[RMDB]
RNA sequence: GGGAACGACUCGAGUAGAGUCGAAAAUACAAGAACUAGCUGAUUUUGUAGCAAAUUACGCUAGCACUAUACAAGGCGCAGGAUUCAGACCUGUGAAUGUAAUAGAUGGGCAAACAUUACCAACCACAACUACAAAAGAGUUUAUUUUAGUAGGUAACGUCCGUAUUGGAUUCGUCCAAUACGGACGAAAAGAAACAACAACAACAAC
Reactivity to 2A3 in 0.01 (KOAc 150mM, MgCl2 10mM, bicine 150mM(pH8.5), 24C), signal-to-noise 1, nucleotides 027 to 156: u170a000c060a000a150g110a150a030c030u030a010g000c000u020g070a090u070u000u030u060g140u110a020g140c140a010a020a170u090u050a010c080g000c000u000a000g030c020a010c030u090a030u060a060c000a060a000g140g020c020g000c000a000g060g080a060u210u190c080a140g150a260c000c000u000g010u010g020a030a030u000g000u020a000a100u000a000g160a150u070g000g020g080c030a100a080a000c020a090u000u280a060c060c020a040a080c040c050a050c030a230a070c030u090a020c010a090a070a000a010g130a020g010u040u200u060a070u000u040u010u050a060g010u010a000g090g020u040a020a000